[RMDB]
RNA sequence: GGGAACGACUCGAGUAGAGUCGAAAAUUAAUGAAGCAAAUCUCCAAACGCCAACGAUGAGCGUUUCGCAAUCGCCGCUUAAGGCCUUUGCCGAGGCUGCUUGAGCCUUGUUACCAAAGAAAAGCCGAAAACCCAAAUGUCUUCGGACAUUUGGGAACAGAUGAAGCUUGUUCGCAAGCUUCAUCUGAAAAGAAACAACAACAACAAC
Reactivity to 2A3 in 0.01 (KOAc 150mM, MgCl2 10mM, bicine 150mM(pH8.5), 24C), signal-to-noise 2, nucleotides 027 to 156: u120u180a020a090u120g070a080a000g040c100a100a060a050u080c080u050c090c020a020a030a070c010g000c020c010a120a030c190g250a240u240g020a030g020c000g010u000u060u140c070g000c050a020a000u000c000g000c000c000g040c090u190u140a120a030g000g000c000c010u000u010u040g000c040c040g010a000g010g000c050u060g000c020u050u030g000a000g040c000c010u000u020g040u120u130a060c030c010a020a010a020g030a000a100a010a000g020c020c000g060a070a060a020a080c010c000c000a010a000a000u000g000u000c000u020u030c130g060g000a000c010a000u010u000u020g000g000g000a010a000
The record gives the reactivity of an RNA of 207 nucleotides to 2A3. The data come from the RNA Mapping Database (RMDB), library M2RFPK. High 2A3 reactivity points to a flexible backbone, as in loops and unpaired stretches. For 2A3 the reverse transcriptase was SuperScript II with manganese.